[RMDB]
An RNA of 177 nucleotides, treated with DMS and read out base by base. The DMS profile rests on 628 reads. Conditions: 150 mM KOAc, 10 mM MgCl2 and 150 mM bicine (pH 8.5), 24 C. Reactivities are given for positions 27 through 126. Values are in units of 0.01, from 0 to 300, in steps of 10.
RNA sequence: GGGAACGACUCGAGUAGAGUCGAAAAUAAAAUAAAAGAGGCCACAGCAGAAGCGUUCACGUCGCGGCCUCUGUAAGAUUGUGGUCAAUCUGUGAAUACUGCUAAAAAGAUCGAAAGAUCAAAAAAAGCUAGUAUAUAUCUUCGGAUAUAUACUAGCAAAAGAAACAACAACAACAAC
Reactivity to DMS in 0.01 (KOAc 150mM, MgCl2 10mM, bicine 150mM(pH8.5), 24C), signal-to-noise 1, nucleotides 027 to 126: u000a080a170a040a080u070a070a130a110a060g030a000g010g030c000c000a140c250a040g000c030a030g000a120a180g010c000g000u000u000c130a160c190g020u010c060g060c070g000g010c000c010u000c000u000g000u000a210a040g000a040u010u000g030u000g060g010u010c000a000a010u000c000u030g020u010g000a040a010u000a030c000u000g000c010u000a060a030a020a140a180g010a000u000c000g000a110a160a220g000a000u000c000a000a000a080a110a080a160a230